[RMDB]
RNA sequence: GGGAACGACUCGAGUAGAGUCGAAAAGCUUAAUAACCUGCGCUGAGCCCUUCUCCCCCAGCUUACCUGUGUCCUAGGGAAUUGGAAGGUCAUCCUUCACAGGAUCGUGUGGAAGUCCUGCUCGGGGUCCAAACAUGGUAAUUCGUUACCAUGUUAACAACUGUUCCUUGUUCGCAAGGAACAGUUGAAAAGAAACAACAACAACAAC
Reactivity to 2A3 in 0.01 (KOAc 150mM, MgCl2 10mM, bicine 150mM(pH8.5), 24C), signal-to-noise 1, nucleotides 027 to 156: g010c030u130u080a060a030u090a140a210c010c040u150g030c050g000c040u090g020a050g030c060c010c000u030u090c060u110c000c000c020c000c000a000g000c010u040u080a000c000c010u050g000u020g080u090c020c000u050a020g000g040g080a010a030u120u080g090g010a050a050g050g020u030c010a070u130c000c010u040u020c030a040c000a060g030g030a040u110c040g010u090g050u040g090g000a030a040g030u050c000c000u000g020c010u010c010g020g000g000g010u010c020c000a000a000a070c000a000u000g000g000u040a080a030u120u030c140g000u030u000a000c000c000a000u000g010u030u000a000a020
Reactivity to DMS in 0.01 (KOAc 150mM, MgCl2 10mM, bicine 150mM(pH8.5), 24C), signal-to-noise 1, nucleotides 027 to 156: g000c050u000u000a070a180u020a100a060c020c020u000g000c060g010c020u000g020a060g000c010c030c050u000u000c030u000c010c000c010c000c060a140g000c040u000u000a100c000c010u010g030u010g000u010c050c020u000a130g010g020g010a050a140u010u030g000g010a050a120g010g000u010c070a190u000c030c020u010u020c090a070c060a030g000g000a050u010c090g040u000g080u000g010g010a090a100g000u000c010c020u010g020c060u070c030g030g010g000g060u010c010c060a120a030a050c000a010u000g020g010u010a000a150u000u000c250g030u000u000a000c000c000a010u000g020u000u000a040a140